An RNA of 177 nucleotides, treated with 2A3 and DMS and read out base by base.
Source: RMDB library TTRDEL, as collected in RNAgym.
Values cover nucleotides 27 to 126.
Conditions: 150 mM KOAc, 10 mM MgCl2 and 150 mM bicine (pH 8.5), 24 C.

[RMDB]
RNA sequence: GGGAACGACUCGAGUAGAGUCGAAAAGAUAUGGACGACGAUCAUACCUGAAUCUCGCCAUCGGAAACGAUGGGCGAGUGAGUAUGGGAGUCCUAAGUCAAAACAGUAUAUGUUCGCAUAUACUGAACAAAAUACUAAGGUUCGCCUUAGUAUUUUGAAAAGAAACAACAACAACAAC
Reactivity to 2A3 in 0.01 (KOAc 150mM, MgCl2 10mM, bicine 150mM(pH8.5), 24C), signal-to-noise 7, nucleotides 027 to 126: g020a010u050a030u090g000g000a010c020g020a050c040g040a130u090c020a000u010a030c020c080u210g240a120a140u130c010u010c010g000c010c010a010u000c000g000g020a040a010a020c020g010a010u040g120g240g070c000g000a000g000u060g010a020g000u010a010u010g010g020g010a020g000u000c010c000u060a080a020g020u010c030a020a020a110a160c010a010g000u010a000u000a000u010g030u050u090c160g010c060a000u000a000u000a010c000u010g010a040a010
Reactivity to DMS in 0.01 (KOAc 150mM, MgCl2 10mM, bicine 150mM(pH8.5), 24C), signal-to-noise 9, nucleotides 027 to 126: g000a040u000a230u000g000g010a020c010g010a160c220g010a090u010c020a010u000a010c010c100u000g010a150a110u010c010u000c000g020c000c000a020u000c000g010g000a060a050a090c000g010a010u000g010g030g010c000g010a010g010u000g010a080g010u000a000u000g000g000g000a130g010u000c000c010u000a020a120g000u000c020a080a090a080a230c010a000g000u000a000u000a000u000g010u000u010c240g030c010a010u010a010u000a000c000u000g000a070a150